An RNA of 177 nucleotides, treated with 2A3 and read out base by base. 2A3 is a SHAPE reagent: it acylates the 2'-hydroxyl of flexible nucleotides of all four kinds.
RNA sequence: GGGAACGACUCGAGUAGAGUCGAAAAGAAAGAAAGACCGACUGUCGAGUGGUUUAGGUAGUUUCAUGUUGUUGGGGUCCAUUUCAAACUCUGCAACAUGAAACGUCUUAAUUGCCCCAGUUACAAAGUUCGCCAGUAUCUUCGGAUACUGGCGAACAAAAGAAACAACAACAACAAC
Reactivity to 2A3 in 0.01 (KOAc 150mM, MgCl2 10mM, bicine 150mM(pH8.5), 24C), signal-to-noise 1, nucleotides 027 to 126: g010a050a090a000g240a110a070a000g250a070c090c100g140a030c000u060g100u110c150g000a000g170u070g000g000u100u020u020a000g080g000u030a160g000u000u000u000c000a000u000g030u000u010g080u000u300g000g000g020g000u110c010c060a200u170u210u030c140a190a160a070c000u000c000u000g000c000a020a020c000a000u020g000a000a000a000c000g000u000c000u000u030a030a020u100u000g000c000c000c000c000a030g000u010u030a080c050a100a090a000